[RMDB]
RNA sequence: GGGAACGACUCGAGUAGAGUCGAAAAUCCUAAGUCUUAGGAGAUCGUGUUCACGCUUUGAUCUACAUCGGAAACGAUGUAGGGAGCGUGUUCACGAUCGUCAAUGAAAUACUAAGAUAUGGAAAAACCUAACCAGGCUUUCGAGCCUGGUUAGGAACUUGUCAAAGGGUUUCGACCCUUUGACAAGAAAAGAAACAACAACAACAAC
Reactivity to DMS in 0.01 (KOAc 150mM, MgCl2 10mM, bicine 150mM(pH8.5), 24C), signal-to-noise 1, nucleotides 027 to 156: u000c000c010u010a070a210g010u000c000u020u000a010g030g010a130g040a010u000c010g070u000g010u000u000c000a010c000g040c000u000u010u010g000a100u020c000u000a010c000a010u000c000g050g010a190a110a220c000g010a060u000g030u010a010g000g020g020a010g030c010g030u020g010u010u000c020a000c000g030a000u010c010g030u000c090a140a190u010g000a150a130a170u000a150c030u010a010a020g020a040u010a260u000g010g010a070a120a120a090a100c010c000u020a010a030c000c010a020g010g000c020u000u000u010c220g010a040g030c020c010u020g000g000u000u010a000g000g020a010a030
Reactivity to 2A3 in 0.01 (KOAc 150mM, MgCl2 10mM, bicine 150mM(pH8.5), 24C), signal-to-noise 3, nucleotides 027 to 156: u020c000c000u020a120a030g040u000c000u010u020a010g010g110a140g040a010u000c000g000u000g010u000u000c000a010c020g000c010u230u130u070g060a090u040c000u000a000c000a010u000c000g040g000a100a040a060c010g000a000u000g010u020a010g000g000g010a000g000c000g010u000g000u000u000c000a000c000g000a000u000c000g010u000c000a020a100u130g100a190a050a060u170a060c000u000a020a000g020a010u070a180u170g070g020a020a060a190a040a030c000c000u010a010a000c010c010a010g010g040c010u170u160u300c300g070a000g000c000c000u010g010g000u000u000a000g000g000a000a010

Source: RMDB library RNAMAK, as collected in RNAgym. The record gives the reactivity of an RNA of 207 nucleotides to DMS and 2A3. 2A3 adducts were read by reverse transcription with SuperScript II with manganese. Conditions: 150 mM KOAc, 10 mM MgCl2 and 150 mM bicine (pH 8.5), 24 C.